Chemical mapping of a 207-nucleotide RNA with DMS and 2A3. For 2A3 the reverse transcriptase was SuperScript II with manganese. The data come from the RNA Mapping Database (RMDB), library M2RFPK.
RNA sequence: GGGAACGACUCGAGUAGAGUCGAAAAUCCACUAUGAAUCGAGUCACUAAAUAAACACAAUUAGCUACUGUGUGUAAUAGUGAGUGUUGAUAACACAAAAUAAUAGUAUAGUUUUGGAAGAUUAUACGCGCCCUUGCUCCGUUCGCGGAGCAAGGAACUAAUUAAGUUAGUUCGCUAACUUAAUUAGAAAAGAAACAACAACAACAAC
Reactivity to DMS in 0.01 (KOAc 150mM, MgCl2 10mM, bicine 150mM(pH8.5), 24C), signal-to-noise 3, nucleotides 027 to 156: u010c010c010a170c100u000a130u020g020a130a070u000c030g010a220g020u000c000a050c020u000a010a020a060u010a080a230a030c000a020c000a020a030u000u010a250g010c220u000a080c050u000g030u000g010u010g010u000a120a300u000a010g010u000g000a090g020u000g010u000u000g010a120u000a100a150c050a070c050a030a030a070a140u000a100a300u010a040g010u000a020u000a020g010u000u000u000u010g020g010a180a200g000a040u000u000a040u000a020c000g010c090g020c000c000c010u000u000g010c000u000c000c020g040u000u000c300g000c030g060g000a020g020c010a000a020g000g000a000a020
Reactivity to 2A3 in 0.01 (KOAc 150mM, MgCl2 10mM, bicine 150mM(pH8.5), 24C), signal-to-noise 7, nucleotides 027 to 156: u000c020c020a030c070u190a190u250g150a110a080u090c100g030a030g100u020c000a000c020u010a040a000a060u050a020a050a000c000a000c000a020a090u120u090a070g060c060u140a050c040u030g000u010g000u000g000u020a010a040u000a010g010u000g020a030g020u030g030u020u040g070a140u200a270a030c040a000c030a060a120a040a050u260a110a070u070a140g010u020a020u000a020g020u000u020u120u180g100g030a090a040g000a070u030u020a010u020a030c050g040c010g070c060c000c000u000u000g010c000u010c010c000g020u050u040c190g000c020g100g000a000g000c000a000a000g000g000a000a000
Conditions: 150 mM KOAc, 10 mM MgCl2 and 150 mM bicine (pH 8.5), 24 C. The DMS profile rests on 6,016 reads.